[RMDB]
RNA sequence: GGGAACGACUCGAGUAGAGUCGAAAAGAUAUGGAGGACGAGUAUAUCAAUUGUGGGUCGGAAACGACCCAUACAAUUUCAACGUACCGUCCUCCUAAGUCAAAAGCAACGGCUUCGGCCGUUGCAACCUUACCUAAAGGUUCGCCUUUAGGUAAGGAAAAGAAACAACAACAACAAC
Reactivity to DMS in 0.01 (KOAc 150mM, MgCl2 10mM, bicine 150mM(pH8.5), 24C), signal-to-noise 4, nucleotides 027 to 126: g000a020u000a060u020g010g000a020g010g010a010c000g000a150g010u000a010u010a120u010c200a020a040u010u000g020u000g000g000g010u000c000g010g000a010a020a050c000g020a010c000c000c000a020u000a020c140a040a020u000u000u010c280a140a150c170g010u000a010c010c000g000u000c000c000u000c000c000u000a010a040g000u000c010a110a110a130a160g010c000a000a000c000g000g000c010u000u010c290g030g010c010c000g010u000u000g000c000a010a030
Reactivity to 2A3 in 0.01 (KOAc 150mM, MgCl2 10mM, bicine 150mM(pH8.5), 24C), signal-to-noise 2, nucleotides 027 to 126: g010a010u000a000u060g010g000a000g000g000a000c000g030a110g120u010a030u030a020u270c220a060a040u010u010g000u020g020g000g000u000c010g010g000a010a000a000c010g000a000c040c030c010a000u020a010c010a000a000u020u100u300c160a180a080c120g000u000a000c000c010g010u010c000c000u000c000c000u010a000a000g000u000c000a030a010a050a090g000c000a000a000c000g000g000c010u100u190c300g150g000c000c000g000u000u000g010c000a000a000